[RMDB]
RNA sequence: GGGAACGACUCGAGUAGAGUCGAAAAGAUAUGGAGCUCUUAUGGCCUAAGACAGGUUGUCGGAAACGACAACUCGAGGAACUACCAUAUGAGCUCCUAAGUCAAAAUCGCGGCUUCGGCCGCGAAACGAGCAUACUUAGUUCGCUAAGUAUGCUCGAAAAGAAACAACAACAACAAC
Reactivity to 2A3 in 0.01 (KOAc 150mM, MgCl2 10mM, bicine 150mM(pH8.5), 24C), signal-to-noise 2, nucleotides 027 to 126: g000a000u030a010u100g010g020a000g000c000u000c000u040u010a010u020g010g000c070c150u170a180a040g110a040c000a010g040g000u010u000g000u020c000g030g000a010a010a020c000g010a000c000a000a010c010u020c020g070a160g000g000a130a150c180u150a080c240c020a000u000a000u010g000a000g000c000u000c000c000u000a000a000g000u010c000a010a020a010a210u070c000g010c000g000g000c000u030u150c300g170g010c000c000g010c000g010a000a000a000
Reactivity to DMS in 0.01 (KOAc 150mM, MgCl2 10mM, bicine 150mM(pH8.5), 24C), signal-to-noise 3, nucleotides 027 to 126: g010a020u000a090u010g000g000a000g010c000u000c000u000u010a020u000g020g010c030c070u010a110a090g010a090c300a090g000g000u000u000g010u000c010g010g000a010a020a060c000g000a010c010a000a010c000u000c060g000a090g010g020a080a050c200u010a180c020c000a010u000a020u000g000a010g020c000u010c000c010u000a010a030g000u000c010a060a050a160a150u000c000g020c010g000g010c000u000u010c260g050g010c000c010g020c010g000a010a020a110